Chemical mapping of a 177-nucleotide RNA with 2A3 and DMS. The data come from the RNA Mapping Database (RMDB), library OK2TRN. For DMS, 1,795 sequencing reads were counted. For 2A3 the reverse transcriptase was SuperScript II with manganese. For DMS the reverse transcriptase was MarathonRT. The reactions ran in a buffer of 150 mM KOAc, 10 mM MgCl2 and 150 mM bicine (pH 8.5), at 24 C.

RNA sequence: GGGAACGACUCGAGUAGAGUCGAAAAUUUCCUCCAAGAGGAUGCAGCGAGUAUUGUACAUGGACCUCAGCAUCACCAAGGGCGAGGGGCAUCUACUUCUUGUGGAUCUCCAGGGGACCAAGAACCGACACAAUGUUCUGUUCGCAGAACAUUGUGUAAAAGAAACAACAACAACAAC
Reactivity to 2A3 in 0.01 (KOAc 150mM, MgCl2 10mM, bicine 150mM(pH8.5), 24C), signal-to-noise 1, nucleotides 027 to 126: u000u040u010c000c000u030c010c010a080a030g050a040g070g000a030u080g100c030a020g090c030g080a020g050u090a110u280u090g090u040a050c060a090u110g110g080a050c000c010u000c030a010g030c000a050u010c040a020c080c120a040a160g090g000g010c020g000a050g030g030g010g060c030a030u000c010u060a040c040u040u120c020u140u140g020u090g000g070a070u000c000u000c000c000a000g020g000g000g000a020c030c000a030a030g060a040a040c010c050g010
Reactivity to DMS in 0.01 (KOAc 150mM, MgCl2 10mM, bicine 150mM(pH8.5), 24C), signal-to-noise 3, nucleotides 027 to 126: u000u000u000c000c000u000c090c060a100a160g010a090g020g020a050u010g010c060a100g010c060g000a070g020u010a070u000u000g030u020a040c110a110u000g010g010a080c110c040u000c020a120g000c050a040u000c030a030c080c070a140a130g030g000g020c060g000a090g030g010g000g010c160a030u000c050u000a040c030u010u000c100u010u000g010u000g000g000a050u020c030u000c000c050a110g020g010g000g000a070c070c060a050a090g010a100a120c090c070g010